[RMDB]
RNA sequence: GGGAACGACUCGAGUAGAGUCGAAAAGCGGAGACCUCCAAGGCGCUCUUGAAGCUGCGGCGUCUUGAGAAGCUCGAAGCCGCGCACAGAUGCGGUCUUCAGCAUCUCGCGUGUGAAGUCAGCACCAGCCCGUUCAUCCAUUCGUGGAUGAACGGGCAAAAGAAACAACAACAACAAC
Reactivity to 2A3 in 0.01 (KOAc 150mM, MgCl2 10mM, bicine 150mM(pH8.5), 24C), signal-to-noise 2, nucleotides 027 to 126: g050c000g000g040a060g000a130c030c010u030c020c020a010a000g010g000c010g000c000u000c000u030u180g140a140a000g040c110u110g040c030g050g000c000g000u010c000u070u160g050a110g000a040a000g000c010u040c110g000a010a040g000c000c010g000c000g000c000a170c030a170g200a210u150g000c000g060g160u010c110u080u090c010a020g030c000a020u000c000u000c000g050c020g020u180g000u020g040a060a070g260u280c050a010g050c030a090c000c000a010